[RMDB]
RNA sequence: GGGAACGACUCGAGUAGAGUCGAAAAGAUAUGGAACAAGAACUACAUCGUGAGGCGCAACAGCUCGGAAACGAGACAUGCGUGUAGCGAUGCUUGUUCCUAAGUCAAAGGGUGGUUCGCCACCCAAGUCACGUAUUAAGUUCGCUUAAUACGUGACAAAAGAAACAACAACAACAAC
Reactivity to 2A3 in 0.01 (KOAc 150mM, MgCl2 10mM, bicine 150mM(pH8.5), 24C), signal-to-noise 7, nucleotides 027 to 126: g020a020u080a030u150g000g000a010a010c010a000a000g020a050a070c150u190a040c300a020u010c000g010u020g030a090g180g000c010g000c010a020a130c040a250g020c000u000c010g020g020a100a060a040c020g000a000g030a040c030a070u070g000c020g040u240g010u080a000g010c000g000a000u000g010c000u000u000g000u000u000c000c000u010a070a010g060u030c050a080a080a050g000g000g000u020g000g040u070u110c280g080c050c000a010c000c000c000a000a010
Reactivity to DMS in 0.01 (KOAc 150mM, MgCl2 10mM, bicine 150mM(pH8.5), 24C), signal-to-noise 7, nucleotides 027 to 126: g000a050u000a300u010g010g010a030a010c010a010a010g000a100a030c070u010a300c010a010u000c000g020u000g010a170g010g000c010g000c010a030a070c240a180g010c000u000c000g000g000a060a080a160c000g010a010g000a040c080a160u010g010c010g020u000g000u000a260g000c000g010a000u000g000c000u000u000g010u000u000c000c000u000a030a070g020u000c020a100a110a130g000g000g030u000g000g010u010u000c270g010c000c010a020c000c000c010a010a030